[RMDB]
RNA sequence: GGGAACGACUCGAGUAGAGUCGAAAAAUGGGCAUCUCUCUUGGGGGUCCAGGUGGAGCAGCCUCAUCCUAUUUUGCCCUGAGACCCUAGACCUGGACUGGCACUAACUUGGCCACUCUCAUUAAGGCCUUGCGUGAGUGUUCGCACUCACGCAAGGAAAAGAAACAACAACAACAAC
Reactivity to 2A3 in 0.01 (KOAc 150mM, MgCl2 10mM, bicine 150mM(pH8.5), 24C), signal-to-noise 2, nucleotides 027 to 126: a000u050g030g000g020c020a130u000c020u010c000u010c000u150u040g090g000g000g000g000u020c000c000a000g090g030u130g060g070a010g000c080a030g010c020c010u090c050a060u070c030c020u010a100u000u080u100u080g020c000c020c020u050g010a080g080a080c000c020c030u000a020g000a070c000c000u000g040g000a030c000u010g010g010c000a050c110u090a300a020c020u210u100g060g020c020c020a030c000u060c000u000c000a030u080u280a070a050g050g050
Reactivity to DMS in 0.01 (KOAc 150mM, MgCl2 10mM, bicine 150mM(pH8.5), 24C), signal-to-noise 1, nucleotides 027 to 126: a160u020g000g000g020c000a030u030c120u070c080u020c030u000u000g000g000g030g000g060u000c000c000a000g050g030u000g090g000a120g000c290a040g050c020c030u000c150a030u000c000c070u020a210u000u000u000u000g020c000c000c000u000g000a140g000a140c000c000c030u010a100g000a070c020c010u020g020g000a010c000u010g000g000c030a260c130u000a080a070c270u000u000g000g020c000c000a140c120u070c060u000c190a160u100u050a120a100g000g040

The record gives the reactivity of an RNA of 177 nucleotides to 2A3 and DMS. High DMS reactivity at an A or C suggests that its Watson-Crick edge is free. For DMS, 1,040 sequencing reads were counted. 2A3 adducts were read by reverse transcription with SuperScript II with manganese.